Source: RMDB library OK2TST, as collected in RNAgym. This 177-nucleotide RNA was probed chemically with 2A3 and DMS. The RNA was probed in 150 mM KOAc, 10 mM MgCl2 and 150 mM bicine (pH 8.5) at 24 C. For 2A3 the reverse transcriptase was SuperScript II with manganese.
[RMDB]
RNA sequence: GGGAACGACUCGAGUAGAGUCGAAAACGUUGCGGUUGGUCGCGACGAUCAGCUGGCUGACCGGCAGGCCCAUGUUGCGCGCCAGGUAGCCGGCGAAGAUGUCGCCGAAGUUGCCGGUCGGCACCGAUGAUAGCAGUCAGUUCGCUGACUGCUAUCAAAAAGAAACAACAACAACAAC
Reactivity to 2A3 in 0.01 (KOAc 150mM, MgCl2 10mM, bicine 150mM(pH8.5), 24C), signal-to-noise 2, nucleotides 027 to 126: c040g010u010u050g040c020g030g000u100u130g070g170u300c010g000c030g070a020c050g020a080u080c030a010g060c000u130g080g000c000u000g010a020c000c040g010g050c010a040g050g020c050c020c000a110u180g110u120u170g080c180g010c050g000c010c020a060g000g040u040a060g060c010c000g020g000c030g000a020a000g240a070u180g100u170c000g000c020c000g020a070a050g190u130u060g000c000c000g000g020u020c000g000g000c030a020c030c000g000a040
Reactivity to DMS in 0.01 (KOAc 150mM, MgCl2 10mM, bicine 150mM(pH8.5), 24C), signal-to-noise 3, nucleotides 027 to 126: c070g030u000u000g020c090g020g000u000u000g010g010u000c010g020c070g000a050c080g010a070u010c040a080g010c130u040g010g000c000u010g010a010c020c000g020g000c000a090g000g020c000c050c040a150u010g020u000u010g000c090g030c110g000c040c050a150g000g010u010a110g000c080c000g010g000c000g010a030a130g000a130u010g010u000c030g000c000c010g020a110a090g010u010u010g000c020c000g010g000u000c000g000g000c000a060c090c060g000a140